Chemical mapping of a 177-nucleotide RNA with DMS and 2A3. It was measured as part of the RMDB library OK2TST. The DMS profile rests on 1,524 reads. DMS adducts were read by reverse transcription with MarathonRT.
[RMDB]
RNA sequence: GGGAACGACUCGAGUAGAGUCGAAAAUGAGGUUGACCUUGACGCCCACCUUGGCGAAGUCGCUCUGGAUGAUGGCGGCCAUCGGCGGGUACACGGGCGAGUCGGUGCCGUAGGUGAGGUCGAAUUCCGCUAACGGAUACUUCGGUAUCCGUUAGCGAAAAGAAACAACAACAACAAC
Reactivity to DMS in 0.01 (KOAc 150mM, MgCl2 10mM, bicine 150mM(pH8.5), 24C), signal-to-noise 2, nucleotides 027 to 126: u040g010a140g000g000u000u000g010a040c020c030u000u010g030a160c160g010c010c000c000a080c010c010u000u000g020g000c000g030a200a190g000u000c020g000c010u010c060u010g010g010a180u000g010a120u000g040g020c030g000g000c050c080a070u000c060g030g020c020g000g000g010u010a060c180a110c150g010g000g010c030g010a070g000u000c030g010g020u030g030c000c020g020u000a060g010g000u000g000a010g040g000u000c030g000a050a180u000u000c060
Reactivity to 2A3 in 0.01 (KOAc 150mM, MgCl2 10mM, bicine 150mM(pH8.5), 24C), signal-to-noise 1, nucleotides 027 to 126: u160g010a010g160g050u080u180g050a100c000c000u040u050g030a010c000g040c000c020c020a030c000c050u070u080g040g000c020g000a050a020g060u000c030g020c020u000c070u080g190g060a140u070g030a060u100g130g120c000g020g080c020c000a130u050c060g150g000c060g000g040g020u050a040c050a030c020g060g000g000c010g000a010g050u110c030g040g100u110g030c030c020g040u010a000g000g120u000g050a050g040g020u010c050g020a010a110u160u000c050